[RMDB]
RNA sequence: GGGAACGACUCGAGUAGAGUCGAAAACUGGAAUGUCCUAGAUCAGAAUAGAGGGUGGAUUUUCUUUCAUGUCACAGAUGUAAUGACCCUCUGAUACUUCAGGGAAAGCCUCUGUGAAUACGACUGUCUUAGCUCAGGCUGUCAUAACAAAAUACCAGAGUCCGUGAUACUUCGGUAUCACGGACUCAAAAGAAACAACAACAACAAC
Reactivity to 2A3 in 0.01 (KOAc 150mM, MgCl2 10mM, bicine 150mM(pH8.5), 24C), signal-to-noise 1, nucleotides 027 to 156: c030u030g000g060a140a000u070g000u060c020c030u050a030g000a120u050c130a040g110a150a140u240a090g020a050g110g100g010u020g010g060a010u120u040u070u000c010u060u190u000c070a070u140g020u110c000a010c000a000g020a050u030g020u110a040a250u100g100a080c060c000c010u040c040u040g010a000u050a140c000u010u090c040a030g000g000g000a000a000a000g010c060c000u000c020u050g020u050g010a020a050u090a060c160g000a000c000u000g020u000c020u010u140a050g050c050u050c090a010g140g040c000u030g000u050c010a020u020a110a050c060a150a000a030a140u240a180c020c140a010
The data come from the RNA Mapping Database (RMDB), library OK3TST. An RNA of 207 nucleotides, treated with 2A3 and read out base by base. The reactions ran in a buffer of 150 mM KOAc, 10 mM MgCl2 and 150 mM bicine (pH 8.5), at 24 C. For 2A3, 407 sequencing reads were counted. Reactivities are given for positions 27 through 156.